[RMDB]
RNA sequence: GGGAACGACUCGAGUAGAGUCGAAAAGAGAAAGUCGUUUCGACGACUUUCUCAUAGUUCUUUUUUAGUGGCAGUAAGCCUGGGAAUGGGGGCGACCCAGGCGUAUGAACAUAGUGUAACGCUCCCCUGACUACCGUUGAGAUUCGUCUCAACGGUACGCACUAGUGCAGUUCGCUGCACUAGUGCGAAAAGAAACAACAACAACAAC
Reactivity to 2A3 in 0.01 (KOAc 150mM, MgCl2 10mM, bicine 150mM(pH8.5), 24C), signal-to-noise 1, nucleotides 027 to 156: g000a000g010a010a000a000g010u010c010g010u070u180u240c260g070a010c000g000a000c000u000u000u000c000u000c000a000u000a000g000u000u070c000u000u010u070u010u000u040a090g030u120g130g060c040a000g010u050a120a030g020c000c010u000g030g000g000a120a180u140g030g010g000g000g000c000g090a080c010c010c010a000g040g010c010g100u010a050u100g050a070a000c040a090u200a110g120u060g060u120a100a050c010g010c030u060c000c000c000c030u030g050a020c020u020a000c000c000g000u000u010g000a000g000a040u010u170c180g080u000c090u000c000a000a000c000g000g010u000a000

An RNA of 207 nucleotides, treated with 2A3 and read out base by base.
The data come from the RNA Mapping Database (RMDB), library PKBLNG.
Values cover nucleotides 27 to 156.
The reactions ran in a buffer of 150 mM KOAc, 10 mM MgCl2 and 150 mM bicine (pH 8.5), at 24 C.
Reactivities are rounded to 0.1 and cut off at 0 and 3.